[RMDB]
RNA sequence: GGGAACGACUCGAGUAGAGUCGAAAAGAUAUGGAGGUUUGUCGACUACUAUGAAGACGAUCGGAAACGAUCGUUGGAGUAGGACACUGACCUCCUAAGUCAAAACCCGAUGGUUCGCCAUCGGGAAGAAUCAACACAACUUCGGUUGUGUUGAUUCAAAAGAAACAACAACAACAAC
Reactivity to DMS in 0.01 (KOAc 150mM, MgCl2 10mM, bicine 150mM(pH8.5), 24C), signal-to-noise 2, nucleotides 027 to 126: g000a010u010a300u000g000g000a080g030g020u000u000u010g040u000c010g000a300c050u010a040c000u000a290u000g010a200a260g000a000c000g000a020u000c000g010g000a080a130a250c000g010a000u000c000g010u010u010g000g000a050g010u030a020g010g010a300c300a000c060u010g010a000c000c010u000c000c000u000a010a090g000u000c040a140a110a130a190c000c000c000g000a010u010g000g000u010u010c270g000c000c000a030u000c000g000g000g010a030a030
Reactivity to 2A3 in 0.01 (KOAc 150mM, MgCl2 10mM, bicine 150mM(pH8.5), 24C), signal-to-noise 2, nucleotides 027 to 126: g000a020u060a040u150g000g000a000g010g000u020u060u060g020u040c020g040a070c010u020a010c010u070a220u300g000a040a010g010a010c000g000a000u010c010g020g010a070a060a030c020g010a010u000c010g000u010u010g000g000a000g020u000a010g020g010a000c000a000c020u070g010a000c010c030u000c000c000u010a130a000g040u000c030a030a070a090a180c000c000c000g010a010u010g000g120u070u080c300g120c120c020a000u000c010g030g040g020a000a010
Source information:
This 177-nucleotide RNA was probed chemically with DMS and 2A3. The 2A3 profile rests on 3,569 reads. Reactivities are given for positions 27 through 126. 2A3 adducts were read by reverse transcription with SuperScript II with manganese. The DMS profile rests on 1,271 reads. The data come from the RNA Mapping Database (RMDB), library TTRDES.